[RMDB]
RNA sequence: GGGAACGACUCGAGUAGAGUCGAAAAGAUAUGGAGCAACUACGACAUGAAAUGGUGUCGGAAACGACACUAUUUCAACAGCGUACUUGCUCCUAAGUCAAAAGGGAACAGCUUCGGCUGUUCCCAACGGUAGUUAUCUCUUCGGAGAUAACUACCGAAAAGAAACAACAACAACAAC
Reactivity to DMS in 0.01 (KOAc 150mM, MgCl2 10mM, bicine 150mM(pH8.5), 24C), signal-to-noise 2, nucleotides 027 to 126: g000a010u010a050u010g010g000a000g010c000a000a000c130u000a040c010g000a020c210a180u020g000a010a020a000u000g000g010u000g040u000c000g050g000a020a010a040c020g020a020c000a010c000u000a000u010u000u000c000a070a060c290a130g000c000g010u000a000c240u000u000g010c000u000c000c000u000a020a070g000u000c020a070a080a100a130g010g000g020a000a020c000a020g000c010u000u000c210g050g020c000u000g000u000u000c000c000c010a000a000
Reactivity to 2A3 in 0.01 (KOAc 150mM, MgCl2 10mM, bicine 150mM(pH8.5), 24C), signal-to-noise 2, nucleotides 027 to 126: g030a000u010a000u030g010g000a000g030c000a010a010c010u010a030c010g020a050c120a300u300g040a020a000a000u000g020g010u010g000u000c010g040g000a000a000a000c000g020a000c000a000c000u000a000u000u000u000c000a140a010c080a060g000c000g000u010a000c010u000u000g000c000u000c000c000u000a000a000g000u020c020a040a000a160a160g030g000g010a010a000c030a000g030c040u160u190c300g270g000c010u010g030u000u030c000c000c000a000a000